[RMDB]
RNA sequence: GGGAACGACUCGAGUAGAGUCGAAAAUGAAAAUGUGCGUCCCUCCCGAAGCUGCGCGCUCCGUCGAAGAGGACGACCACAGCCGAUAGAGGACUGCCGGUCUUCGGUCAAGGGAAAAAGAAAAAAAACAACCAUGUAUCUUCGGAUACAUGGUUGUAAAAGAAACAACAACAACAAC
Reactivity to DMS in 0.01 (KOAc 150mM, MgCl2 10mM, bicine 150mM(pH8.5), 24C), signal-to-noise 1, nucleotides 027 to 126: u000g000a120a030a110a120u000g030u000g000c230g010u020c010c010c010u000c110c040c010g000a070a040g010c030u000g000c110g030c120g030c130u000c020c020g030u000c020g000a170a130g000a110g000g000a060c080g000a040c050c020a020c070a140g000c050c000g000a070u010a070g010a100g010g000a040c040u030g000c030c070g010g000u030c020u000u000c010g010g010u000c150a090a110g000g040g010a020a090a030a050a000g020a020a000a000a040a090a070a130

Annotation:
The record gives the reactivity of an RNA of 177 nucleotides to DMS. The RNA was probed in 150 mM KOAc, 10 mM MgCl2 and 150 mM bicine (pH 8.5) at 24 C. DMS adducts were read by reverse transcription with MarathonRT.